[RMDB]
RNA sequence: GGGAACGACUCGAGUAGAGUCGAAAACUACGGGGCGCAGCAGGCGCGAAACCUUUACACUGCACGACAGUGCGAUAGGGGGACUCCGAGUGUGAGGGCAUAUAGCCCUCGCUUUUCUGUACCGUAACAAGUUUCAAGUGUUCGCACUUGAAACUUGAAAAGAAACAACAACAACAAC
Reactivity to DMS in 0.01 (KOAc 150mM, MgCl2 10mM, bicine 150mM(pH8.5), 24C), signal-to-noise 1, nucleotides 027 to 126: c060u020a020c050g020g000g020g080c030g020c080a080g010c200a120g060g030c010g000c080g010a050a160a140c030c000u000u000u000a100c110a050c010u000g000c010a130c290g020a070c150a110g030u000g000c030g000a110u000a030g000g000g030g020g000a190c040u010c090c030g020a090g010u000g000u010g020a060g000g000g000c030a180u010a110u030a210g000c000c000c000u000c000g000c010u000u000u030u000c030u000g010u000a080c040c030g030u030a060a200

An RNA of 177 nucleotides, treated with DMS and read out base by base. Conditions: 150 mM KOAc, 10 mM MgCl2 and 150 mM bicine (pH 8.5), 24 C. For DMS the reverse transcriptase was MarathonRT. The data come from the RNA Mapping Database (RMDB), library RFMREP.